Conditions: 150 mM KOAc, 10 mM MgCl2 and 150 mM bicine (pH 8.5), 24 C.
Structure probing data (DMS and 2A3) for a 207-nucleotide construct.
[RMDB]
RNA sequence: GGGAACGACUCGAGUAGAGUCGAAAAUUUUACUGUAGCAGUAUUCUAGGCAGUAAACAGACCACAGACGAUGACACUGUCUCUUAAAUGAGCACCUAGUCUAAGACUAAACUGUGUUCUUUCCACUAGAGAGCGCUGAAGUAUAUGCUUACCAGGCCAAGUUAAGAGACUUCGGUCUCUUAACUUGAAAAGAAACAACAACAACAAC
Reactivity to DMS in 0.01 (KOAc 150mM, MgCl2 10mM, bicine 150mM(pH8.5), 24C), signal-to-noise 2, nucleotides 027 to 156: u000u000u000u000a050c020u000g030u010a120g030c040a130g010u010a140u000u000c010u000a060g000g010c020a110g000u000a030a060a050c130a050g000a130c010c020a090c050a070g000a150c050g000a140u000g000a040c040a230c050u000g000u010c010u050c050u010u010a080a110a140u000g000a040g000c070a020c070c080u000a090g000u000c020u010a070a210g010a170c120u000a030a100a150c030u000g020u000g040u000u000c020u000u000u000c010c050a080c050u000a090g010a080g010a100g070c090g050c040u000g010a070a030g040u000a040u000a060u000g000c020u000u000a100c020c030a210g000g040c080
Reactivity to 2A3 in 0.01 (KOAc 150mM, MgCl2 10mM, bicine 150mM(pH8.5), 24C), signal-to-noise 4, nucleotides 027 to 156: u030u040u020u040a020c000u020g040u070a050g120c040a070g070u140a140u140u110c060u100a050g010g050c020a010g010u030a000a020a030c000a010g030a020c010c030a020c030a020g080a030c040g050a120u170g010a010c020a010c080u080g100u060c000u000c010u070u200a280a290a280u190g000a000g000c030a020c020c090u050a020g000u020c010u070a120a040g030a040c040u090a030a140a080c030u030g000u000g020u030u010c000u020u030u000c030c000a040c030u030a040g020a010g000a010g120c030g000c040u030g020a040a000g030u040a110u070a030u300g010c010u020u020a050c020c030a010g030g000c020